Structure probing data (2A3 and DMS) for a 177-nucleotide construct. The reactions ran in a buffer of 150 mM KOAc, 10 mM MgCl2 and 150 mM bicine (pH 8.5), at 24 C. It was measured as part of the RMDB library TTRDEL.
RNA sequence: GGGAACGACUCGAGUAGAGUCGAAAAGAUAUGGAUCCGUGUACCAGCCAACAGCUCGGAAACGAGACAUGGCUGUACCGGAUCCUAAGUCGAACCCAUCUGAAGCUGUUCGCAGCUUCAGAUGGAAGAUUUCAUUUUGCUUCGGCAAAAUGAAAUCAAAAGAAACAACAACAACAAC
Reactivity to 2A3 in 0.01 (KOAc 150mM, MgCl2 10mM, bicine 150mM(pH8.5), 24C), signal-to-noise 1, nucleotides 027 to 126: g030a000u040a060u160g020g000a000u000c030c040g080u210g010u260a090c140c180a020g000c030c000a090a070c100a250g040c000u000c000g070g000a080a090a010c020g010a010g050a030c090a120u120g000g000c030u000g000u000a010c000c000g070g010a000u010c010c010u000a010a000g030u000c000g020a040a050c000c010c000a000u000c000u020g010a020a000g000c000u010g060u160u210c300g020c200a000g000c000u020u000c000a010g000a000u010g000g020a130a050
Reactivity to DMS in 0.01 (KOAc 150mM, MgCl2 10mM, bicine 150mM(pH8.5), 24C), signal-to-noise 2, nucleotides 027 to 126: g000a010u000a300u000g000g020a010u010c000c000g000u030g010u000a000c200c080a030g000c000c000a020a110c210a210g010c000u000c000g000g000a070a080a270c000g000a010g000a040c070a220u000g010g000c000u010g000u000a010c000c010g020g000a000u000c000c000u030a000a050g000u000c000g000a140a210c160c010c000a010u000c000u000g000a020a000g030c000u000g010u000u030c250g010c000a000g000c000u000u000c000a000g000a020u000g000g010a060a050